[RMDB]
RNA sequence: GGGAACGACUCGAGUAGAGUCGAAAAGCGAGUCUUCGAGGACAGGUCGAGCAACCGUGCAUUCCAGUAGGCGCACCGUUGUAGCCCGUCGCACGAACUCGUCGGUCCUUGACGACGACCGCACCAACCUGGCUUCGUUCACAGUCAGACCGCGUUGACUUUGUCUACCCUUCGGGGUAGACAAAGUAAAAGAAACAACAACAACAAC
Reactivity to 2A3 in 0.01 (KOAc 150mM, MgCl2 10mM, bicine 150mM(pH8.5), 24C), signal-to-noise 1, nucleotides 027 to 156: g000c000g000a010g060u000c010u000u010c000g010a010g000g000a000c010a030g000g150u220c000g000a030g100c010a050a030c010c010g020u000g000c010a020u160u300c150c060a100g140u300a060g100g000c030g010c030a040c050c180g240u300u250g070u070a110g000c060c000c020g040u070c020g000c000a020c000g000a070a060c000u000c000g020u020c000g030g000u000c000c000u000u000g000a000c020g010a010c010g000a010c010c000g000c010a020c000c000a000a000c000c000u000g000g010c010u080u070c090g250u170u250c140a110c010a100g000u000c030a000g000a080c000c100g090c070g090u020u020g080